RNA sequence: GGGAACGACUCGAGUAGAGUCGAAAAUGUUAUCAGGUGGAACACGAUGCAAUUUUGGUUGGUGUAAUAGGAGGAAAAUUGCACGGUAUCCAUCUGUAAACCGAUGUAUUGUCCUUCGGGACAAUACCCUUCCAUACAGUUUCGACUGUAUGGAAGGAAAAGAAACAACAACAACAAC
Reactivity to DMS in 0.01 (KOAc 150mM, MgCl2 10mM, bicine 150mM(pH8.5), 24C), signal-to-noise 5, nucleotides 027 to 126: u010g010u000u010a130u010c000a010g020g030u000g010g000a040a040c040a110c020g000a150u000g000c010a000a010u000u000u000u000g000g010u000u010g000g010u000g010u010a120a120u010a140g010g010a100g010g000a040a010a010a010u000u000g010c000a000c010g000g010u000a110u000c000c000a000u000c000u000g010u000a030a070a100c030c130g010a130u010g000u000a010u000u000g000u000c000c000u010u020c230g030g000g010a010c000a000a000u000a010c010
Reactivity to 2A3 in 0.01 (KOAc 150mM, MgCl2 10mM, bicine 150mM(pH8.5), 24C), signal-to-noise 8, nucleotides 027 to 126: u110g000u030u030a100u140c000a000g000g000u010g000g000a040a010c080a040c300g070a160u010g000c010a010a010u020u000u030u050g240g020u090u080g030g100u070g030u100a120a220u110a210g080g070a060g010g060a030a030a010a010u000u000g000c010a000c010g010g010u020a190u070c000c000a000u000c000u000g000u010a010a000a000c010c010g030a030u210g000u010a000u010u010g010u000c000c000u010u040c210g040g000g000a000c000a000a000u000a000c000